[RMDB]
RNA sequence: GGGAACGACUCGAGUAGAGUCGAAAAAGUGUCGCUAGUAAUUAUAAAGCGAAGUCUUAUCAGACUAAUUGAUUGAACUUUAAUUUUCGGAUAAUCCCAUUCUCAGGAAUACGCUUCCUAUAUUUUGCUUUCAGUACUCAUUCGUGAGUACUGAAAGAAAAGAAACAACAACAACAAC
Reactivity to 2A3 in 0.01 (KOAc 150mM, MgCl2 10mM, bicine 150mM(pH8.5), 24C), signal-to-noise 8, nucleotides 027 to 126: a010g110u070g000u000c000g000c000u010a010g130u150a240a130u260u170a190u120a230a110a000g000c000g020a020a010g020u000c020u060u150a120u150c060a020g030a050c050u070a080a110u040u090g090a090u040u080g070a040a030c020u030u050u100a120a110u070u090u090u080c060g060g000a020u030a100a090u080c000c000c040a060u170u030c080u020c050a010g000g050a020a010u060a050c140g030c100u020u030c010c020u030a050u010a040u200u070u050u130g070
Reactivity to DMS in 0.01 (KOAc 150mM, MgCl2 10mM, bicine 150mM(pH8.5), 24C), signal-to-noise 3, nucleotides 027 to 126: a080g020u020g020u000c000g000c000u000a100g020u000a120a100u000u010a120u010a090a070a050g010c010g010a080a040g000u020c030u000u000a040u020c060a070g000a030c090u000a030a070u020u010g010a060u000u010g010a120a110c150u000u010u000a030a030u000u000u020u000c020g020g000a030u000a080a070u010c020c000c000a150u010u010c080u000c110a060g020g000a050a010u010a100c280g010c160u000u020c000c000u000a060u010a050u000u010u000u020g000